[RMDB]
RNA sequence: GGGAACGACUCGAGUAGAGUCGAAAAAGUAGCUUACGAGCUACAGAGACCUCGUCUCGUGUGCAUCAGAAAUGCACGCACUCGCGAAGUCCGCGAGCAGCACUCCAGCUGGAUGAGGAGAAAGGAAGUAGCGCCCUAUAUUCGUAUAGGGCGCUACAAAAGAAACAACAACAACAAC
Reactivity to DMS in 0.01 (KOAc 150mM, MgCl2 10mM, bicine 150mM(pH8.5), 24C), signal-to-noise 1, nucleotides 027 to 126: a080g000u000a000g000c000u000u000a050c120g180a030g000c000u000a070c000a130g040a170g000a130c000c000u000c000g060u010c010u000c190g000u000g020u020g000c020a000u000c280a300g020a060a100a110u000g000c020a000c060g020c000a080c000u000c000g110c000g050a140a300g000u070c250c050g000c010g000a000g000c000a000g020c000a100c080u010c090c040a160g000c000u000g020g000a000u000g060a000g060g000a140g000a030a160a120g030g010a070a090
Reactivity to 2A3 in 0.01 (KOAc 150mM, MgCl2 10mM, bicine 150mM(pH8.5), 24C), signal-to-noise 2, nucleotides 027 to 126: a000g010u010a010g020c020u080u080a110c270g020a030g020c020u020a000c010a000g070a000g010a010c000c000u000c000g000u000c000u030c070g000u000g000u000g000c000a030u070c090a070g130a130a180a000u020g000c000a000c020g020c000a000c000u000c000g000c030g150a130a110g060u090c110c020g010c000g010a000g000c000a000g030c000a010c010u020c060c010a010g000c000u000g000g040a010u000g000a000g050g010a020g070a050a050a060g050g040a200a050

An RNA of 177 nucleotides, treated with DMS and 2A3 and read out base by base. For DMS, 1,181 sequencing reads were counted. The data come from the RNA Mapping Database (RMDB), library RFM100. 2A3 adducts were read by reverse transcription with SuperScript II with manganese. The reactions ran in a buffer of 150 mM KOAc, 10 mM MgCl2 and 150 mM bicine (pH 8.5), at 24 C.